[RMDB]
RNA sequence: GGGAACGACUCGAGUAGAGUCGAAAAAUUUUUAACGCGUGUGUACUCUCUAUCACGAAUUACCCAGUUAUUUACGACUUUACUCGAGUCGUUAUAGCGUGAUAUGAGAGAGUUAUCCGCGAACCAAUUACCUACUAUACUUCGGUAUAGUAGGUAAAAAAGAAACAACAACAACAAC
Reactivity to 2A3 in 0.01 (KOAc 150mM, MgCl2 10mM, bicine 150mM(pH8.5), 24C), signal-to-noise 2, nucleotides 027 to 126: a000u160u130u040u080u110a130a050c020g000c020g010u010g020u020g060u110a000c000u020c000u000c020u010a010u040c010a000c030g050a080a080u120u050a080c000c000c010a030g090u060u110a130u150u140u080a060c030g000a000c000u010u020u010a000c000u010c000g000a000g000u000c000g010u000u000a020u010a000g000c010g000u020g000a010u000a030u230g070a070g000a010g020a010g010u020u060a050u010c020c000g000c000g020a000a000c000c010a010a080
Reactivity to DMS in 0.01 (KOAc 150mM, MgCl2 10mM, bicine 150mM(pH8.5), 24C), signal-to-noise 3, nucleotides 027 to 126: a090u010u010u010u020u010a050a150c060g020c000g010u010g010u000g000u000a070c010u000c000u000c020u000a050u010c000a000c000g000a080a100u000u000a220c040c010c020a180g000u010u010a040u000u000u010a130c020g000a020c000u010u000u000a030c040u000c030g010a010g010u010c000g000u000u000a040u000a070g020c000g040u010g000a010u000a050u000g030a070g000a080g010a070g010u000u000a060u000c050c000g020c010g030a090a120c140c100a090a130
Chemical mapping of a 177-nucleotide RNA with 2A3 and DMS. The RNA was probed in 150 mM KOAc, 10 mM MgCl2 and 150 mM bicine (pH 8.5) at 24 C. It was measured as part of the RMDB library M2PK90.